[RMDB]
RNA sequence: GGGAACGACUCGAGUAGAGUCGAAAAAUUUGGGGGAAUUAGUAUUACGACGCUAGAGCUGAAAUUCUUGGACCGUCGUAAGACUACCUUAAGCGAAAGCAUUUGCCAAAGAUGUUUUCAUUAAUCAAUCUUGUUUAUCAUUCGUGAUAAACAAGAUAAAAGAAACAACAACAACAAC
Reactivity to DMS in 0.01 (KOAc 150mM, MgCl2 10mM, bicine 150mM(pH8.5), 24C), signal-to-noise 8, nucleotides 027 to 126: a110u010u010u010g010g000g000g000g020a200a110u050u000a020g010u000a030u000u000a010c010g000a020c010g010c030u000a070g000a020g020c100u020g000a150a090a100u020u000c010u000u010g010g010a100c300c010g010u000c000g010u000a000a010g010a020c000u000a040c070c030u000u010a040a080g010c150g000a010a010a010g000c000a020u000u000u000g010c100c120a100a080a040g000a010u000g010u000u000u000u000c000a120u020u030a070a090u030c170a090
Reactivity to 2A3 in 0.01 (KOAc 150mM, MgCl2 10mM, bicine 150mM(pH8.5), 24C), signal-to-noise 9, nucleotides 027 to 126: a000u160u140u110g030g000g000g010g080a060a160u150u020a060g010u000a010u010u000a000c000g000a000c000g000c050u030a010g000a000g010c080u140g120a020a080a090u110u000c010u010u070g060g030a100c050c030g000u000c000g000u000a000a000g000a000c000u030a040c010c000u030u040a090a010g100c050g060a010a000a000g000c000a000u010u030u100g080c070c060a080a090a020g010a000u000g000u000u000u000u010c020a040u050u210a070a140u090c100a010
Source information
Chemical mapping of a 177-nucleotide RNA with DMS and 2A3. For DMS the reverse transcriptase was MarathonRT. Source: RMDB libraries RFM100 and RFMREP, as collected in RNAgym. 2A3 adducts were read by reverse transcription with SuperScript II with manganese.